[RMDB]
RNA sequence: GGGAACGACUCGAGUAGAGUCGAAAAUUUGGAGGUCAAAUUUCAGAUGAGGUUGCUGAACGGCUGAUGACCAUCGCCUAUGAAAGUGGUGUUAACCUCUUUGAUACUGCCGAAGUCUAUGCUGCUGCCUUACGAGCACAUUCGUGUGCUCGUAAGGAAAAGAAACAACAACAACAAC
Reactivity to DMS in 0.01 (KOAc 150mM, MgCl2 10mM, bicine 150mM(pH8.5), 24C), signal-to-noise 2, nucleotides 027 to 126: u010u010u000g000g010a120g020g000u010c190a070a110a130u000u000u000c040a020g020a050u010g010a100g010g020u000u010g030c030u010g020a080a110c150g010g010c050u010g020a080u010g020a080c130c050a120u010c060g000c040c140u000a040u000g000a000a030a070g030u010g000g010u010g010u010u000a080a040c010c020u000c020u000u000u000g010a040u000a010c200u000g030c050c020g010a080a120g000u020c000u010a150u010g000c010u000g000c040u000g020
Reactivity to 2A3 in 0.01 (KOAc 150mM, MgCl2 10mM, bicine 150mM(pH8.5), 24C), signal-to-noise 1, nucleotides 027 to 126: u150u060u120g050g000a050g040g000u080c040a030a040a070u050u090u000c030a050g040a130u090g040a060g020g090u090u120g010c010u060g020a100a020c040g020g000c030u090g020a030u070g030a000c010c020a040u050c040g010c010c010u080a070u160g190a050a020a050g050u070g090g000u050g050u090u110a070a080c000c000u010c050u040u000u020g030a050u040a040c030u030g110c040c000g020a020a010g000u000c020u060a040u100g030c030u010g000c010u020g000